Chemical mapping of a 177-nucleotide RNA with 2A3 and DMS. Source: RMDB library OK2TST, as collected in RNAgym. For DMS the reverse transcriptase was MarathonRT.
RNA sequence: GGGAACGACUCGAGUAGAGUCGAAAACUGCGCCUGGAUCGCCCCGCCCAUGCAGCGGAUCGCCGCGGCGGCGAUGAUUCCCUCCGGGGUGCCGCCGAUCCCAGCUAGCAGGUCGGUGCCGGAGUGCUCGUACGUUAAUGUUCGCAUUAACGUACGAAAAAGAAACAACAACAACAAC
Reactivity to 2A3 in 0.01 (KOAc 150mM, MgCl2 10mM, bicine 150mM(pH8.5), 24C), signal-to-noise 2, nucleotides 027 to 126: c000u020g010c000g020c030c030u080g040g040a120u100c040g020c010c040c000c000g000c040c020c000a110u070g030c040a000g000c010g050g000a030u040c030g070c130c070g050c040g040g000c020g020g090c070g070a110u140g010a050u180u200c010c000c000u000c040c080g020g030g000g010u070g020c000c010g020c010c020g020a010u010c020c010c010a020g010c030u040a040g030c020a010g000g020u020c010g000g000u030g120c010c000g030g000a180g030u020g010c000
Reactivity to DMS in 0.01 (KOAc 150mM, MgCl2 10mM, bicine 150mM(pH8.5), 24C), signal-to-noise 3, nucleotides 027 to 126: c040u000g020c040g020c040c000u000g000g000a050u000c080g030c130c030c010c010g000c060c040c060a080u010g020c020a080g020c060g020g000a060u010c040g000c160c170g000c110g000g020c020g020g000c020g020a070u010g000a170u010u000c010c020c000u000c150c110g000g010g010g010u000g020c090c010g020c010c010g010a020u000c020c010c020a220g010c040u000a070g010c050a060g010g020u000c010g010g000u000g000c010c010g010g000a090g020u000g010c050
Conditions: 150 mM KOAc, 10 mM MgCl2 and 150 mM bicine (pH 8.5), 24 C. 2A3 adducts were read by reverse transcription with SuperScript II with manganese.